Chemical mapping of a 207-nucleotide RNA with 2A3 and DMS.
Source: RMDB library M2RFPK, as collected in RNAgym.
The DMS profile rests on 2,153 reads.
For 2A3 the reverse transcriptase was SuperScript II with manganese.
The reactions ran in a buffer of 150 mM KOAc, 10 mM MgCl2 and 150 mM bicine (pH 8.5), at 24 C.
[RMDB]
RNA sequence: GGGAACGACUCGAGUAGAGUCGAAAAAGAAUCCACCACAGCGUAAAAUCAUCUGAUUGGGUGAGUUGGUCGCACCGCCAUUUGACGAACGAACGCCAAGCCUAAGCCGUCUUUGUGCAUUAAGUGGAAAAGGAGCCCCAGUUCGCUGGGGCUCCAAUCUAACUACUAUCUUCGGAUAGUAGUUAGAAAAAGAAACAACAACAACAAC
Reactivity to 2A3 in 0.01 (KOAc 150mM, MgCl2 10mM, bicine 150mM(pH8.5), 24C), signal-to-noise 1, nucleotides 027 to 156: a020g120a060a020u020c000c000a000c010c010a020c020a020g050c010g050u060a030a030a140a030u020c010a000u040c010u100g110a300u110u250g070g000g000u020g020a090g080u070u130g090g050u040c040g020c050a020c000c020g000c010c000a040u050u030u170g020a010c010g020a140a020c020g000a030a010c030g000c020c050a070a000g020c030c020u040a110a000g030c020c020g050u000c090u020u080u070g100u110g020c000a010u070u090a060a070g020u000g070g000a050a030a060a070g030g000a000g000c010c000c000c000a000g020u020u080c130g000c090u000g000g070g000g020c010u000c000c000a000a000
Reactivity to DMS in 0.01 (KOAc 150mM, MgCl2 10mM, bicine 150mM(pH8.5), 24C), signal-to-noise 1, nucleotides 027 to 156: a060g000a180a130u000c000c000a000c020c020a130c060a090g000c070g010u000a090a090a080a090u000c010a100u010c030u010g030a280u000u000g000g000g030u000g020a070g000u010u000g000g020u000c060g030c010a080c050c050g030c020c000a110u000u000u000g000a020c030g040a110a110c040g000a050a060c080g000c020c050a050a230g010c010c050u000a050a060g010c000c020g000u020c060u010u000u010g040u000g000c000a140u000u000a060a080g040u000g000g000a040a020a140a190g010g000a050g000c050c000c000c000a010g020u000u010c300g030c030u010g010g040g030g010c000u000c010c010a000a050